[RMDB]
RNA sequence: GGGAACGACUCGAGUAGAGUCGAAAAGAAAGAAAGCCGAAGCAGCGAAAGAGGUCAAACGUCAGGAUUUCGGGCCUAAAUACGACAUUAUGCAGAAAGCCGACAUCAAUGUCGUAAACAAAGAAAAGACUCAUAAAUCAUUCGUGAUUUAUGAGUCAAAAGAAACAACAACAACAAC
Reactivity to 2A3 in 0.01 (KOAc 150mM, MgCl2 10mM, bicine 150mM(pH8.5), 24C), signal-to-noise 6, nucleotides 027 to 126: g110a010a070a010g070a070a050a000g020c010c000g030a040a010g030c040a010g030c050g070a070a080a040g100a040g050g020u050c050a070a090a040c030g050u050c060a030g060g000a030u030u050u040c000g000g040g010c000c010u080a110a090a030u050a000c010g000a000c000a000u010u010a000u030g010c020a000g190a130a100a030g160c080c060g070a170c010a020u040c070a010a030u000g000u000c000g000u010a020a010a010c100a050a070a010g130a030a080a010a010
Reactivity to DMS in 0.01 (KOAc 150mM, MgCl2 10mM, bicine 150mM(pH8.5), 24C), signal-to-noise 5, nucleotides 027 to 126: g020a080a040a070g000a090a040a080g030c030c020g000a090a090g020c050a100g000c090g010a100a060a090g000a100g030g010u010c050a040a100a190c110g010u000c030a050g020g000a090u000u010u000c020g020g010g000c010c030u010a020a080a070u010a010c020g000a020c020a010u000u000a030u010g020c150a100g010a130a040a120g000c130c080g000a140c020a010u000c160a010a000u000g000u000c000g000u010a000a050a070c200a070a070a080g020a060a050a080a100
About this RNA:
An RNA of 177 nucleotides, treated with 2A3 and DMS and read out base by base. 2A3 is a SHAPE reagent: it acylates the 2'-hydroxyl of flexible nucleotides of all four kinds. DMS adducts were read by reverse transcription with MarathonRT.